About this RNA:
The record gives the reactivity of an RNA of 177 nucleotides to DMS and 2A3. Reactivities are rounded to 0.1 and cut off at 0 and 3. For 2A3 the reverse transcriptase was SuperScript II with manganese. Source: RMDB library OK1LIB, as collected in RNAgym. Conditions: 150 mM KOAc, 10 mM MgCl2 and 150 mM bicine (pH 8.5), 24 C.
[RMDB]
RNA sequence: GGGAACGACUCGAGUAGAGUCGAAAAACUGCUUCAGCAGAAAGCCCAGCGGUCCGAGGAGGAUGUCCACGCGCUUGUCGGGCUUCUGGUAGGCGCUCUGGAGGCUGGCGACCCGCGCCUUGGCGGCCCUACGUACUUUAUUCGUAAAGUACGUAGGAAAAGAAACAACAACAACAAC
Reactivity to DMS in 0.01 (KOAc 150mM, MgCl2 10mM, bicine 150mM(pH8.5), 24C), signal-to-noise 8, nucleotides 027 to 126: a080c030u000g010c010u010u030c160a130g010c030a020g000a060a060a120g010c060c000c000a060g000c040g010g000u000c030c010g000a110g010g020a180g000g010a080u020g010u010c020c030a060c280g010c100g010c030u000u000g010u000c020g000g000g010c150u040u020c000u010g000g010u000a030g000g010c010g000c030u020c070u000g000g000a080g010g010c030u000g000g010c030g010a100c040c020c020g010c070g000c020c020u010u020g010g020c070g010g000c110
Reactivity to 2A3 in 0.01 (KOAc 150mM, MgCl2 10mM, bicine 150mM(pH8.5), 24C), signal-to-noise 9, nucleotides 027 to 126: a000c020u030g020c010u190u170c070a070g000c010a010g090a100a040a020g040c020c010c000a010g030c020g050g010u020c020c030g020a040g090g070a020g050g030a100u090g110u040c020c010a050c040g020c000g020c020u060u050g100u080c020g000g010g070c000u190u070c010u050g020g020u060a040g040g000c010g010c020u030c040u050g050g010a040g060g010c030u030g020g010c010g030a070c000c000c010g020c010g010c010c020u060u090g100g010c040g010g020c010